[RMDB]
The record gives the reactivity of an RNA of 177 nucleotides to DMS and 2A3. It was measured as part of the RMDB library M2PK90. For DMS the reverse transcriptase was MarathonRT.
RNA sequence: GGGAACGACUCGAGUAGAGUCGAAAAUACACUUUACGUGUGCUGGUUUCAUUACUUUGUCCCAAACCAGGCACGCGUAAUUAAACGCCAGUUUGGCCAGGUCCGCGUUAUCGAUGGUCACCAAUAACAGUGUUAUUCCGUUCGCGGAAUAACACUGAAAAGAAACAACAACAACAAC
Reactivity to DMS in 0.01 (KOAc 150mM, MgCl2 10mM, bicine 150mM(pH8.5), 24C), signal-to-noise 2, nucleotides 027 to 126: u010a140c110a140c100u000u000u000a000c010g050u000g020u000g000c010u020g000g020u000u000u000c110a110u010u010a090c170u010u000u010g000u000c030c010c010a050a020a010c000c010a030g000g020c000a000c020g030c010g000u000a000a000u000u000a020a070a140c070g000c020c020a060g020u000u020u000g020g000c020c050a080g000g010u010c040c060g040c040g020u000u000a050u000c060g020a060u000g000g010u020c050a060c140c060a050a020u010a050a090
Reactivity to 2A3 in 0.01 (KOAc 150mM, MgCl2 10mM, bicine 150mM(pH8.5), 24C), signal-to-noise 2, nucleotides 027 to 126: u100a010c050a020c080u000u020u010a010c000g000u000g010u000g000c020u010g000g080u030u040u020c100a130u080u160a140c130u170u190u200g120u070c010c030c000a010a000a010c000c010a030g120g100c000a000c010g000c020g010u010a000a000u030u070a100a160a020c040g030c020c020a040g060u050u080u050g050g010c000c000a020g000g010u000c000c000g000c020g020u050u060a120u140c040g060a060u040g030g030u030c020a020c020c040a030a070u120a090a010